Annotation:
An RNA of 177 nucleotides, treated with DMS and 2A3 and read out base by base.
RNA sequence: GGGAACGACUCGAGUAGAGUCGAAAAGUGAGUCCUUACGAGGACUCACAAUAAAUUCAGCGGUAAUUCGACCGCAAAGAUUACCGCUGAUGCGGUCGAAAAAGCUGCUACGUACGCGUAGCAGCAACUCCACUCCCUAUUUCGAUAGGGAGUGGAGAAAAGAAACAACAACAACAAC
Reactivity to DMS in 0.01 (KOAc 150mM, MgCl2 10mM, bicine 150mM(pH8.5), 24C), signal-to-noise 2, nucleotides 027 to 126: g040u010g000a000g010u000c000c030u000u000a080c230g000a020g040g060a000c000u000c000a020c000a100a040u030a030a060a140u000u000c010a010g000c000g000g000u030a000a030u040u000c070g000a280c130c130g030c260a000a060a180g000a010u000u000a000c060c000g030c000u010g020a040u000g020c170g030g000u010c120g000a010a090a080a060a120g080c000u000g000c000u000a000c000g000u010a040c290g030c010g020u000a000g000c000a010g000c020a030a000
Reactivity to 2A3 in 0.01 (KOAc 150mM, MgCl2 10mM, bicine 150mM(pH8.5), 24C), signal-to-noise 4, nucleotides 027 to 126: g010u000g000a000g000u040c010c000u010u050a080c270g080a030g000g000a000c020u020c000a000c000a000a010u040a000a030a010u070u040c010a010g030c010g000g000u030a030a030u100u090c030g110a100c080c100g060c070a010a010a010g010a000u000u030a010c000c030g000c000u000g000a010u030g010c030g050g080u170c130g030a100a010a010a060a000g000c000u000g000c020u000a000c010g020u000a000c240g000c000g150u010a000g000c000a000g000c010a000a000
The RNA was probed in 150 mM KOAc, 10 mM MgCl2 and 150 mM bicine (pH 8.5) at 24 C. For 2A3 the reverse transcriptase was SuperScript II with manganese. Reactivities are given for positions 27 through 126. For DMS, 2,317 sequencing reads were counted.